[RMDB]
RNA sequence: GGGAACGACUCGAGUAGAGUCGAAAAGAUUUGACAAGUUCUAACAUUGUUCUCGUGCGAGAUGGUGCGAGAUGGACGCCUCAUUUGAUUGAUUUCGGUCUGGGCUCAGUUUCAAACCUGGUCGAAACGGGAUUUACCGUUUCGACGGUAAAUCCCGAAAAGAAACAACAACAACAAC
Reactivity to 2A3 in 0.01 (KOAc 150mM, MgCl2 10mM, bicine 150mM(pH8.5), 24C), signal-to-noise 3, nucleotides 027 to 126: g020a050u050u150u170g020a030c020a090a090g050u110u040c020u050a090a030c020a130u080u120g040u150u020c000u000c000g040u050g020c020g060a170g020a140u160g160g000u020g000c010g000a010g000a040u050g050g050a010c030g030c010c010u090c040a020u080u080u140g130a090u060u080g060a060u000u050u100c050g010g010u040c030u030g010g010g000c070u080c090a030g030u000u090u080c060a060a070a020c000c020u020g020g030u010c010g010a040a010a010
Reactivity to DMS in 0.01 (KOAc 150mM, MgCl2 10mM, bicine 150mM(pH8.5), 24C), signal-to-noise 3, nucleotides 027 to 126: g010a080u000u000u000g040a040c080a150a170g000u000u000c030u000a090a100c110a100u000u010g000u000u000c010u010c010g030u000g030c080g010a100g010a080u010g010g040u000g000c170g000a020g020a030u010g000g000a070c090g010c100c060u010c110a070u010u000u000g000a070u000u000g010a160u000u000u000c040g010g000u000c020u000g010g010g020c030u010c100a090g010u000u000u000c070a060a120a100c030c010u000g010g020u000c010g010a020a070a090